[RMDB]
RNA sequence: GGGAACGACUCGAGUAGAGUCGAAAAACGAGUGGGCAAAAGGAUUAUAGACACGGGACAAUUAGACGUACGGCUCUAGAAUUCCCGCAGGAAUUGCAUAAGUUGAUGGUCUACCUGAACACAGUGCGAUAUCGUUGACGUUCGCGUCAACGAUAUCAAAAGAAACAACAACAACAAC
Reactivity to DMS in 0.01 (KOAc 150mM, MgCl2 10mM, bicine 150mM(pH8.5), 24C), signal-to-noise 3, nucleotides 027 to 126: a070c040g020a070g030u000g020g000g030c060a010a020a060a080g020g020a090u010u010a150u010a050g010a210c060a130c040g030g000g000a090c180a050a070u020u020a070g010a040c070g000u010a070c120g020g000c060u000c030u000a100g010a070a140u010u000c010c000c140g010c160a120g000g010a070a040u000u000g000c050a050u010a060a090g010u000u000g030a040u000g020g000u000c040u000a080c080c010u020g010a020a080c130a060c110a090g000u010g020c160
Reactivity to 2A3 in 0.01 (KOAc 150mM, MgCl2 10mM, bicine 150mM(pH8.5), 24C), signal-to-noise 1, nucleotides 027 to 126: a030c100g010a120g050u080g000g000g050c030a000a000a150a060g070g000a040u080u070a100u120a130g020a010c010a030c070g030g050g000a020c020a090a100u090u040a040g000a050c000g040u110a030c040g120g000c020u000c000u000a020g040a010a030u020u020c000c010c010g000c020a020g000g080a060a060u060u050g050c020a040u020a150a030g060u060u050g030a050u100g020g010u040c020u000a070c000c000u000g030a030a000c060a020c030a050g080u090g080c030